Structure probing data (DMS and 2A3) for a 177-nucleotide construct. The 2A3 profile rests on 1,761 reads. For DMS, 3,351 sequencing reads were counted. The RNA was probed in 150 mM KOAc, 10 mM MgCl2 and 150 mM bicine (pH 8.5) at 24 C. DMS adducts were read by reverse transcription with MarathonRT.
[RMDB]
RNA sequence: GGGAACGACUCGAGUAGAGUCGAAAAGUUGUAUACACCGGGUAGUUUCCAACUCCGGCUGGUGUGAAGAAGGAGCCGUUCCACGCAGGACACGAACAAGAAGAAGCCGAAGCAACUUCAGGUCGCCGAUAUUACACAUCUUCGGAUGUGUAAUAUCAAAAGAAACAACAACAACAAC
Reactivity to DMS in 0.01 (KOAc 150mM, MgCl2 10mM, bicine 150mM(pH8.5), 24C), signal-to-noise 4, nucleotides 027 to 126: g000u010u010g020u010a130u010a120c080a060c050c010g020g010g010u010a050g020u020u010u000c030c070a130a140c070u010c040c020g000g020c040u000g010g010u000g010u000g010a060a060g010a140a110g000g000a050g000c050c020g020u010u000c010c030a080c130g020c080a040g000g000a090c080a070c080g000a050a070c080a060a100g000a080a040g000a050a210g000c010c050g010a060a080g010c040a040a100c040u020u000c070a060g010g000u010c040g000c110c080
Reactivity to 2A3 in 0.01 (KOAc 150mM, MgCl2 10mM, bicine 150mM(pH8.5), 24C), signal-to-noise 2, nucleotides 027 to 126: g000u010u040g000u110a140u010a050c060a030c000c010g000g030g000u040a070g040u010u110u040c040c010a050a040c000u010c030c030g140g000c040u060g030g000u090g010u030g060a030a160g040a050a030g070g000a000g000c000c010g020u020u040c030c000a030c030g060c030a000g030g050a020c020a010c180g080a130a040c050a060a070g080a040a000g020a050a000g070c030c010g050a040a000g000c020a020a030c000u030u030c010a020g070g010u010c010g010c050c020